[RMDB]
Chemical mapping of a 177-nucleotide RNA with 2A3 and DMS. Source: RMDB library RFMREP, as collected in RNAgym.

RNA sequence: GGGAACGACUCGAGUAGAGUCGAAAAAACUUCGGUACCGUGUAUAUCUACAACAACUGAGGCUAAACUGGUUGCGGCUGAGAACUCAUCCAUCACUUUUUCAAUGAGCAUUUCGUUGCUUUUGGACCUCUGUAGAUAUGUUCGCAUAUCUACAGAGAAAAGAAACAACAACAACAAC
Reactivity to 2A3 in 0.01 (KOAc 150mM, MgCl2 10mM, bicine 150mM(pH8.5), 24C), signal-to-noise 3, nucleotides 027 to 126: a000a000c040u090u030c030g040g010u020a040c000c060g010u000g060u030a030u010a040u130c090u030a070c020a090a020c010a050a020c080u070g040a020g020g040c030u070a060a030a060c030u050g080g000u050u030g020c010g020g000c020u030g030a010g030a120a020c010u010c030a040u010c030c010a040u070c020a020c080u110u090u030u100u090c080a120a100u180g040a050g010c040a050u050u140u140c070g050u040u010g020c030u020u000u010u020g020g020a020c000
Reactivity to DMS in 0.01 (KOAc 150mM, MgCl2 10mM, bicine 150mM(pH8.5), 24C), signal-to-noise 5, nucleotides 027 to 126: a080a040c030u000u000c030g010g010u000a070c080c060g010u000g000u010a070u000a090u010c090u000a050c060a050a070c070a070a050c060u000g010a090g010g010c040u020a050a080a090c080u000g000g020u000u000g010c120g010g000c050u010g000a100g000a060a060c050u010c040a060u000c030c020a080u010c080a060c080u010u000u010u000u000c060a030a050u020g010a030g010c050a040u000u010u000c160g010u000u000g010c060u010u000u010u000g000g000a300c300